[RMDB]
RNA sequence: GGGAACGACUCGAGUAGAGUCGAAAAUCAGCUGCAGGAUUUUAUGUUGUCGUAGAUCAAACCUGACUUUAUUCACUCGGAACGCACUGGGACAUCUGGUAUUGUCCAUCUGCGUUUUGAAUUUUGCCAUGGUCUAGUUCUUCGGAACUAGACCAUGAAAAGAAACAACAACAACAAC
Reactivity to DMS in 0.01 (KOAc 150mM, MgCl2 10mM, bicine 150mM(pH8.5), 24C), signal-to-noise 1, nucleotides 027 to 126: u000c030a130g030c060u020g020c140a060g000g010a100u010u010u000u000a040u010g010u000u000g010u000c100g050u000a050g010a090u000c030a080a100a110c040c020u000g000a010c070u000u000u000a060u040u000c080a080c260u000c070g000g000a020a010c020g010c000a000c140u000g010g030g010a020c020a040u000c130u030g030g010u010a100u010u010g000u000c010c000a110u000c110u010g000c010g000u000u010u000u010g010a020a050u000u000u030u000g010c210

Overview:
An RNA of 177 nucleotides, treated with DMS and read out base by base. DMS (dimethyl sulfate) methylates the pairing face of unpaired adenines and cytosines. It was measured as part of the RMDB library RFMREP. The RNA was probed in 150 mM KOAc, 10 mM MgCl2 and 150 mM bicine (pH 8.5) at 24 C.